An RNA of 177 nucleotides, treated with DMS and 2A3 and read out base by base.
Conditions: 150 mM KOAc, 10 mM MgCl2 and 150 mM bicine (pH 8.5), 24 C.
The 2A3 profile rests on 10,350 reads.
It was measured as part of the RMDB library OK2TST.
The DMS profile rests on 7,670 reads.

RNA sequence: GGGAACGACUCGAGUAGAGUCGAAAACACACUCACACCUUGUGAGGCGAGAAGAAGUUUAUUCAUUGAAGAUGGAUCGUAAUCUUCAAGUCUCUGCAGCAACUGUAGUGCAUGAAAGCGUGACCAACACGUAAUGGGUAUUCGUACCCAUUACGUGAAAAGAAACAACAACAACAAC
Reactivity to DMS in 0.01 (KOAc 150mM, MgCl2 10mM, bicine 150mM(pH8.5), 24C), signal-to-noise 7, nucleotides 027 to 126: c080a130c060a070c030u010c070a060c060a090c150c110u020u020g020u000g010a020g010g030c050g000a300g000a040a040g000a030a070g010u000u010u010a020u010u010c020a070u000u000g010a110a100g010a050u000g000g010a040u010c220g010u010a090a050u000c010u000u000c010a040a210g010u000c010u000c010u000g010c030a130g010c080a050a050c160u010g020u000a040g000u000g010c070a070u000g000a050a060a090g010c090g010u000g010a240c030c020a100a190
Reactivity to 2A3 in 0.01 (KOAc 150mM, MgCl2 10mM, bicine 150mM(pH8.5), 24C), signal-to-noise 6, nucleotides 027 to 126: c010a000c000a010c000u040c020a020c000a020c020c090u090u110g040u030g040a020g030g000c020g020a050g000a030a000g020a020a010g030u090u160u100a050u000u040c050a030u010u110g130a090a060g100a100u020g020g020a030u060c070g040u140a060a090u010c000u000u020c000a000a010g000u000c000u000c020u060g040c020a030g010c020a040a110c030u020g010u120a040g020u020g070c070a080u090g110a090a050a010g080c060g020u020g020a050c020c010a040a040